The record gives the reactivity of an RNA of 207 nucleotides to 2A3 and DMS. As a SHAPE reagent, 2A3 marks flexible, mostly unpaired nucleotides at the ribose 2'-OH. For DMS the reverse transcriptase was MarathonRT. For 2A3, 4,252 sequencing reads were counted. The reactions ran in a buffer of 150 mM KOAc, 10 mM MgCl2 and 150 mM bicine (pH 8.5), at 24 C. The data come from the RNA Mapping Database (RMDB), library M2RFPK.
RNA sequence: GGGAACGACUCGAGUAGAGUCGAAAAUUCCAUAUGAGUAUCCUGAAAACGGGCUUUUCAGCAUGGAACGUACAUAUUAAAUAGUAGGAGUGCAUAGUGGCCCGUAUAGCAGGCAUUAACAUUCCUGAAAACGUGAAAAGGUUCGCCUUUUCACGAAGUUAAUGAACAACUUCGGUUGUUCAUUAACAAAAGAAACAACAACAACAAC
Reactivity to 2A3 in 0.01 (KOAc 150mM, MgCl2 10mM, bicine 150mM(pH8.5), 24C), signal-to-noise 4, nucleotides 027 to 156: u060u000c030c000a030u050a040u160g020a030g100u090a090u070c000c010u000g050a080a040a010a020c000g010g000g000c030u110u070u100u150c090a010g000c010a020u030g040g060a150a020c050g050u070a010c020a030u170a080u200u300a130a140a140u130a050g040u010a020g020g110a050g020u000g010c030a050u080a170g090u070g020g000c020c010c000g010u010a020u010a010g020c000a000g000g010c000a010u010u050a030a030c000a030u050u120c010c000u040g050a090a070a020a040c010g000u000g010a000a000a000a010g010g000u020u040c090g060c010c000u000u000u000u000c000a000c000g000a000a000
Reactivity to DMS in 0.01 (KOAc 150mM, MgCl2 10mM, bicine 150mM(pH8.5), 24C), signal-to-noise 2, nucleotides 027 to 156: u020u010c010c030a080u000a030u000g010a150g010u000a100u010c020c020u010g000a070a080a200a160c050g010g030g020c050u000u000u010u000c030a230g000c040a060u010g010g030a080a110c050g030u000a170c060a090u000a140u000u010a060a060a240u000a120g000u010a070g010g000a130g030u000g010c000a090u000a160g030u000g010g000c010c000c010g000u000a020u010a140g000c040a040g010g010c080a060u000u000a070a110c040a090u000u000c020c000u030g000a050a090a090a180c000g020u000g000a040a010a010a010g000g040u000u000c300g010c000c010u000u000u000u000c000a000c010g010a000a050